Source: RMDB library OK2TRN, as collected in RNAgym. This 177-nucleotide RNA was probed chemically with DMS and 2A3. 2A3 adducts were read by reverse transcription with SuperScript II with manganese. Conditions: 150 mM KOAc, 10 mM MgCl2 and 150 mM bicine (pH 8.5), 24 C. The DMS profile rests on 2,220 reads.
RNA sequence: GGGAACGACUCGAGUAGAGUCGAAAACGGACGUGCGCCUGCAGAUGUAUUUCGACAUUGCGUGCGAAUUCAUUUCUGAUCGCGAUUCGCCAUACCGGAUUCUCAAUGGUAAAGCCCUGGAAGCCUGUGCCCUAUGACAUUUCGAUGUCAUAGGGCAAAAAGAAACAACAACAACAAC
Reactivity to DMS in 0.01 (KOAc 150mM, MgCl2 10mM, bicine 150mM(pH8.5), 24C), signal-to-noise 2, nucleotides 027 to 126: c140g000g030a040c050g000u000g010c060g010c060c040u000g030c070a070g010a030u010g000u010a040u000u000u000c030g010a050c050a070u000u000g010c200g030u010g000c160g010a030a040u000u000c090a090u000u010u000c050u000g010a080u000c070g010c010g000a070u000u000c040g000c050c030a090u000a070c080c060g000g000a140u010u000c020u010c020a060a120u010g010g010u010a040a070a150g020c000c010c000u000g000g010a060a110g010c030c050u000g010
Reactivity to 2A3 in 0.01 (KOAc 150mM, MgCl2 10mM, bicine 150mM(pH8.5), 24C), signal-to-noise 1, nucleotides 027 to 126: c010g000g050a010c040g050u070g000c020g010c020c070u020g000c030a000g020a080u030g040u160a110u070u120u080c040g000a020c010a060u160u280g040c080g070u140g080c000g020a010a040u060u020c050a050u050u080u050c060u110g150a100u100c000g000c030g090a090u010u070c000g000c000c000a000u030a070c000c020g000g060a010u110u000c030u010c000a010a080u110g050g000u060a090a090a030g000c000c000c000u010g040g020a000a040g040c000c020u070g070